[RMDB]
RNA sequence: GGGAACGACUCGAGUAGAGUCGAAAAUACAUUUGGACAACUUAGCUCGGGCAUGAUGGACACUUUUGGUUUAAGCCAGAGUGGUGUCAACAAUAAAAUAGGACGAACAACCAGCUAUCCAUGUUCGUAGCUUGCUAUCGUUCGCGAUAGCAAGCUAAAAAGAAACAACAACAACAAC
Reactivity to 2A3 in 0.01 (KOAc 150mM, MgCl2 10mM, bicine 150mM(pH8.5), 24C), signal-to-noise 1, nucleotides 027 to 126: u070a030c110a070u090u030u070g060g010a030c000a140a060c050u130u090a000g080c010u000c040g000g040g000c020a060u070g020a030u070g070g060a010c000a000c000u070u100u120u050g060g050u010u270u210a100a080g010c020c000a010g000a010g000u140g000g000u020g000u000c000a030a020c030a080a150u170a130a090a010a050u130a040g000g110a020c050g040a060a000c000a030a010c010c040a000g010c000u010a010u050c040c060a050u060g000u120u030c000g060
Reactivity to DMS in 0.01 (KOAc 150mM, MgCl2 10mM, bicine 150mM(pH8.5), 24C), signal-to-noise 1, nucleotides 027 to 126: u010a080c160a140u000u000u000g010g000a090c220a060a050c090u020u000a170g000c020u000c070g020g010g000c040a090u000g030a120u000g000g010a120c030a000c050u000u000u010u010g020g030u000u000u010a010a060g000c000c000a000g000a060g050u000g020g040u000g000u010c010a070a130c050a080a090u000a050a080a060a090u010a090g040g020a090c060g000a100a030c060a040a060c050c050a040g010c030u000a050u000c080c070a100u000g000u010u010c000g030
An RNA of 177 nucleotides, treated with 2A3 and DMS and read out base by base. For DMS the reverse transcriptase was MarathonRT. For 2A3, 783 sequencing reads were counted. The RNA was probed in 150 mM KOAc, 10 mM MgCl2 and 150 mM bicine (pH 8.5) at 24 C.